Structure probing data (2A3) for a 177-nucleotide construct.
RNA sequence: GGGAACGACUCGAGUAGAGUCGAAAACACUUGAUAGUUAUACUUGCAUUUUCAUCAGUUAGUAUAACAAAAGCAAACCUUUUUUGAUGAUCGGUGCUUCCUCUUCGCUGGGACAGAUUUGACUAUCAGUCGGGUAGUGCUUCGGCACUACCCGACUAAAAGAAACAACAACAACAAC
Reactivity to 2A3 in 0.01 (KOAc 150mM, MgCl2 10mM, bicine 150mM(pH8.5), 24C), signal-to-noise 1, nucleotides 027 to 126: c070a120c120u160u130g020a050u110a010g000u130u000a000u000a020c000u070u050g020c040a130u170u040u020u300c060a140u050c020a000g000u040u030a000g010u040a000u000a030a020c060a030a130a070a000g140c070a080a020a080c020c010u040u070u020u070u220u150g130a070u020g030a020u060c040g010g000u000g050c000u030u000c050c000u000c030u140u060c030g060c040u080g070g000g010a000c040a000g020a070u080u040u150g130a110c010u020a070u170c210
Source information: Reactivities are given for positions 27 through 126. It was measured as part of the RMDB library OK1LIB.